[RMDB]
RNA sequence: GGGAACGACUCGAGUAGAGUCGAAAACCCUGGAACUUCGGUUCCAGGGCAUGGUGCAAUUCCCCCGCUGAAACGGAGCGAUAUCCGUCCCAAAAAUAUAAAAAGCUGAUGAUUUCGAUCAUCAGAACAAUACUUCGGAUUUCGAUCCGAAGUAUUGAAAAGAAACAACAACAACAAC
Reactivity to DMS in 0.01 (KOAc 150mM, MgCl2 10mM, bicine 150mM(pH8.5), 24C), signal-to-noise 3, nucleotides 027 to 126: c000c000c000u000g010g000a000a010c000u000u020c190g050g000u000u000c000c000a010g000g010g000c030a020u000g030g000u010g020c190a120a210u000u000c010c030c000c110c000g020c010u020g000a090a140a040c020g000g010a010g020c020g020a060u010a010u000c010c020g000u000c030c080c090a020a090a120a080a070u010a100u030a090a060a100a120a110g000c000u000g010a010u000g000a020u000u000u000c180g000a020u000c000a000u000c000a000g000a070a110
Reactivity to 2A3 in 0.01 (KOAc 150mM, MgCl2 10mM, bicine 150mM(pH8.5), 24C), signal-to-noise 3, nucleotides 027 to 126: c010c010c000u000g020g000a010a000c000u060u100c230g140g000u010u000c000c000a000g010g020g000c010a060u190g100g060u160g100c030a030a050u090u100c010c000c010c010c000g000c030u050g070a050a040a000c000g000g020a000g000c010g000a020u010a000u000c000c000g010u020c010c000c000a030a090a000a020a000u250a020u140a110a190a020a030a020g040c020u000g000a000u000g000a000u040u080u130c210g040a020u010c000a000u010c000a000g000a020a010

Structure probing data (DMS and 2A3) for a 177-nucleotide construct.
The reactions ran in a buffer of 150 mM KOAc, 10 mM MgCl2 and 150 mM bicine (pH 8.5), at 24 C.
For DMS, 2,337 sequencing reads were counted.
The data come from the RNA Mapping Database (RMDB), library M2PK50.
2A3 adducts were read by reverse transcription with SuperScript II with manganese.
DMS adducts were read by reverse transcription with MarathonRT.